[RMDB]
RNA sequence: GGGAACGACUCGAGUAGAGUCGAAAAUACACUUCGGUGUACCAUCAUCCUAAGUCUCCAUGAGGAAGUCGGGAGACCGAACGUCGGAAACGACGUCCGGUCUUUGAUCGACUUCUACCCACCAUGGAGAUAUGGAGUUAUUCCGAUUCGUCGGAAAUAGAAGUCUGAUAUUCGUAUCAGACUUCUAAAAAGAAACAACAACAACAAC
Reactivity to DMS in 0.01 (KOAc 150mM, MgCl2 10mM, bicine 150mM(pH8.5), 24C), signal-to-noise 2, nucleotides 027 to 156: u000a060c010a030c020u000u010c270g100g000u000g010u000a060c060c080a220u010c120a120u020c000c000u000a060a230g010u020c000u000c000c000a030u010g000a110g000g030a000a030g020u000c000g000g040g000a010g010a010c000c020g010a000a000c000g030u000c020g010g000a260a110a300c000g010a030c020g020u000c000c010g040g010u010c000u000u000u000g000a100u010c010g000a020c010u000u000c000u010a010c000c010c010a300c080c000a010u000g000g000a010g030a000u000a070u010g000g020a150g000u010u000a120u000u010c000c000g010a190u000u000c230g030u000c000g030g010a010a100a290
Reactivity to 2A3 in 0.01 (KOAc 150mM, MgCl2 10mM, bicine 150mM(pH8.5), 24C), signal-to-noise 3, nucleotides 027 to 156: u080a000c000a000c010u060u120c260g150g000u030g000u030a130c020c010a180u190c030a120u010c020c010u060a150a040g030u000c000u010c010c000a010u010g010a020g040g000a000a010g000u000c000g000g000g000a010g000a000c000c000g000a000a000c000g010u000c000g020g060a140a050a030c010g000a000c000g000u000c000c000g030g020u000c020u060u030u060g080a090u070c000g000a000c000u010u000c000u000a000c010c000c020a080c030c000a000u000g000g000a020g000a000u000a010u040g000g000a030g030u160u150a130u150u030c000c000g000a000u010u100c100g080u010c000g150g000a000a020a020